Record summary
The record gives the reactivity of an RNA of 207 nucleotides to DMS and 2A3.
RNA sequence: GGGAACGACUCGAGUAGAGUCGAAAAAGACCACCGUAAGCGUCGUUGCAACCAAUUAAGCGCCGAUUCCAAUCAGCGCGACUACGCCCUCGCUGCCUAAGCGACGGCUGGUCUGUCAGACCGGGAGUGCCCUCGGCCCGGAUCCUGGCAUCAGCUACAUCUUGUCAGAGUUCGCUCUGACAAGAUGAAAAGAAACAACAACAACAAC
Reactivity to DMS in 0.01 (KOAc 150mM, MgCl2 10mM, bicine 150mM(pH8.5), 24C), signal-to-noise 1, nucleotides 027 to 156: a110g000a150c040c000a290c030c030g000u000a000a150g070c090g100u010c030g060u000u000g000c020a100a180c050c000a060a110u000u010a150a250g050c000g070c000c000g030a110u000u010c180c180a110a140u020c010a000g000c010g040c000g000a060c030u000a030c110g020c030c020c010u000c020g000c030u010g050c110c080u000a060a140g020c020g090a110c050g020g020c010u000g030g020u000c050u000g010u000c040a060g020a110c000c000g090g020g000a090g000u050g010c070c020c000u000c050g000g030c030c000c020g040g000a020u000c090c000u000g000g000c000a030u010c060a080g020c030u000a190
Reactivity to 2A3 in 0.01 (KOAc 150mM, MgCl2 10mM, bicine 150mM(pH8.5), 24C), signal-to-noise 2, nucleotides 027 to 156: a000g070a010c000c000a040c000c010g050u060a080a000g020c000g100u040c030g050u040u080g050c050a080a130c020c020a160a180u090u150a260a050g000c030g000c020c000g060a050u190u190c070c090a150a030u010c040a020g010c030g000c010g040a010c000u050a010c020g010c000c010c020u000c020g010c020u050g030c040c070u120a070a030g030c030g060a050c040g010g020c030u020g010g010u000c010u000g000u000c000a010g000a030c010c000g010g000g000a010g030u080g020c000c000c010u020c000g060g000c010c010c010g010g010a030u100c050c010u000g000g000c020a080u060c030a010g000c010u050a010
The reactions ran in a buffer of 150 mM KOAc, 10 mM MgCl2 and 150 mM bicine (pH 8.5), at 24 C. DMS adducts were read by reverse transcription with MarathonRT. For DMS, 1,518 sequencing reads were counted.